Source information
Structure probing data (2A3) for a 177-nucleotide construct.
RNA sequence: GGGAACGACUCGAGUAGAGUCGAAAAUACGUGCUUGUAACACACUACACACUCGUUUUGUAUUCGAGAAGUAGUUGCAACAACGGUCCCCUUAUUGCCUGACAAGCUGAGGGCCACCCUUCUAUCCAAGCUGAACGCACUUCGGUGCGUUCAGCUUAAAAGAAACAACAACAACAAC
Reactivity to 2A3 in 0.01 (KOAc 150mM, MgCl2 10mM, bicine 150mM(pH8.5), 24C), signal-to-noise 2, nucleotides 027 to 126: u120a000c020g000u010g000c150u030u040g020u100a100a040c040a010c050a000c050u090a000c010a000c000a030c020u020c010g020u040u010u040u300g180u180a200u010u010c000g000a000g010a180a000g030u030a010g000u000u010g000c040a010a020c000a040a030c050g010g030u030c020c010c000c000u000u150a130u300u040g000c000c030u060g010a090c020a030a000g000c000u000g060a060g000g070g010c020c010a010c000c030c020u090u060c000u100a130u010c070c020
Source: RMDB library RFM100, as collected in RNAgym.